[RMDB]
RNA sequence: GGGAACGACUCGAGUAGAGUCGAAAAACUGGAUAUUGCGCGAACAGGGCUCAGGCACGCGCAGCGUGUUCGAGGAUGCGAUCCGCGCUUCCGGCUACGAUCCGGCAAGGCUGAAUGUCGCACUGGACCUCCAUUUACGGUUCGCCGUAAAUGGAGGAAAAGAAACAACAACAACAAC
Reactivity to DMS in 0.01 (KOAc 150mM, MgCl2 10mM, bicine 150mM(pH8.5), 24C), signal-to-noise 3, nucleotides 027 to 126: a090c030u000g000g000a070u030a100u000u020g030c040g020c020g000a030a040c070a120g010g000g010c030u010c040a050g000g000c010a050c030g000c010g040c270a100g020c010g030u000g010u000u000c050g060a070g000g000a110u000g010c050g000a080u000c050c020g010c040g000c040u000u000c020c010g020g000c050u000a090c170g000a100u010c020c020g040g000c050a050a110g000g000c020u000g040a110a090u000g000u000c010g000c100a100c060u010g000g020a300
Reactivity to 2A3 in 0.01 (KOAc 150mM, MgCl2 10mM, bicine 150mM(pH8.5), 24C), signal-to-noise 2, nucleotides 027 to 126: a010c050u080g020g010a040u070a070u170u190g000c000g020c000g020a040a010c020a070g070g040g000c000u020c030a010g030g040c030a010c010g000c000g000c090a070g020c000g000u020g020u050u120c020g020a030g030g070a040u080g080c030g010a050u000c010c000g000c000g000c000u030u000c000c000g010g000c010u110a070c090g070a110u030c000c000g010g000c040a020a030g020g060c010u090g080a150a060u170g040u070c020g000c050a030c040u010g040g020a020
An RNA of 177 nucleotides, treated with DMS and 2A3 and read out base by base.
Values cover nucleotides 27 to 126.
The RNA was probed in 150 mM KOAc, 10 mM MgCl2 and 150 mM bicine (pH 8.5) at 24 C.
The data come from the RNA Mapping Database (RMDB), library OK2TST.
For DMS the reverse transcriptase was MarathonRT.